[RMDB]
RNA sequence: GGGAACGACUCGAGUAGAGUCGAAAAGACGAAGAUAGCGAAAGCUAGAAAAGAUCCGUGGCUAAACAGGAAACUGAAGAGAGCUGCUCGGGUGAGAAGCCUUGCCACGGAAGCAGCUCAAAGAGAAACGGGAUAGUACCUUCGGGUACUAUCCCGUAAAAGAAACAACAACAACAAC
Reactivity to DMS in 0.01 (KOAc 150mM, MgCl2 10mM, bicine 150mM(pH8.5), 24C), signal-to-noise 1, nucleotides 027 to 126: g050a150c110g080a190a230g000a090u000a010g000c000g000a070a060a180g030c000u000a000g010a140a110a110a150g020a030u000c000c050g020u000g000g010c000u000a110a130a080c240a070g010g000a030a090a130c000u000g000a140a060g000a080g000a030g000c000u000g010c000u000c020g000g000g000u000g000a080g000a240a160g060c040c050u000u000g000c000c000a000c010g000g000a060a000g050c000a000g010c000u000c000a110a000a230g000a160g040a080a250
Reactivity to 2A3 in 0.01 (KOAc 150mM, MgCl2 10mM, bicine 150mM(pH8.5), 24C), signal-to-noise 1, nucleotides 027 to 126: g050a000c030g030a050a030g050a100u080a010g010c050g060a170a020a000g070c020u020a030g130a000a170a010a000g020a030u000c000c000g000u000g000g000c040u070a150a040a030c060a140g020g040a140a090a090c070u030g080a130a000g180a050g000a000g000c000u000g000c010u000c090g000g000g000u040g010a020g000a050a010g020c000c000u000u090g000c000c000a000c000g000g000a000a000g000c010a000g000c000u070c020a010a060a000g170a000g050a030a030